Record summary:
Chemical mapping of a 207-nucleotide RNA with 2A3. For 2A3 the reverse transcriptase was SuperScript II with manganese.
RNA sequence: GGGAACGACUCGAGUAGAGUCGAAAAGGAACUACCGGCGUCAUCGGUGCAUAUGUGUAUGACCAGCCCGCCGUAUUUUGGCUUGCGAGAUUACGGCGAUGAUGAACAGAUCGGACUUGAGGAAUCGCUCGAUGAAUACAUCACCGAACUGGUCGGCGGUAUCAAGCCGAUUCGUCGGCUUGAUACCAAAAGAAACAACAACAACAAC
Reactivity to 2A3 in 0.01 (KOAc 150mM, MgCl2 10mM, bicine 150mM(pH8.5), 24C), signal-to-noise 1, nucleotides 027 to 156: g000g000a150a010c010u060a020c040c000g000g050c000g140u050c010a070u030c040g000g010u150g010c070a060u190a040u190g040u010g010u040a040u100g040a030c010c010a000g010c020c000c000g000c000c000g000u040a030u000u050u040u020g200g030c070u010u020g160c000g050a030g030a070u040u040a010c030g010g010c010g020a030u050g000a030u060g020a020a090c010a140g050a100u060c030g040g010a010c010u140u160g040a060g100g070a100a120u110c040g020c050u010c050g090a130u040g000a000a030u030a040c010a040u030c030a030c020c000g070a030a090c070u080g010g110u000c030g000g000c090
The RNA was probed in 150 mM KOAc, 10 mM MgCl2 and 150 mM bicine (pH 8.5) at 24 C.